[RMDB]
RNA sequence: GGGAACGACUCGAGUAGAGUCGAAAAGGGCCAUGAUGCCGGACGACCUGAAAUCCGCGCUGCCGCCAAUCGUGGUUAAAGGGGUGAGCUACUCAAUCAUGCUGGUUGGCAUUCUCGGCAAGAUGCACGGCAUGAGGAAGGAAAACCGGAGGCUGCGUCUGUGACUUUGGUUCGCCAAAGUCACAGAAAAAGAAACAACAACAACAAC
Reactivity to 2A3 in 0.01 (KOAc 150mM, MgCl2 10mM, bicine 150mM(pH8.5), 24C), signal-to-noise 1, nucleotides 027 to 156: g000g010g040c060c000a090u150g050a040u140g070c040c040g010g000a040c050g090a060c010c000u070g150a060a090a090u040c040c000g040c010g060c060u070g010c030c040g000c000c040a000a070u080c180g060u000g010g110u160u200a010a200a190g040g000g020g040u050g040a000g070c000u020a060c000u090c080a020a130u000c000a030u030g030c000u010g160g300u160u090g110g000c010a020u230u040c080u050c010g140g000c050a050a070g020a000u000g000c000a010c000g000g000c000a000u000g040a010g000g080a090a060g030g000a000a080a000a000c060c010g020g010a000g050g000c080u060g020c020g030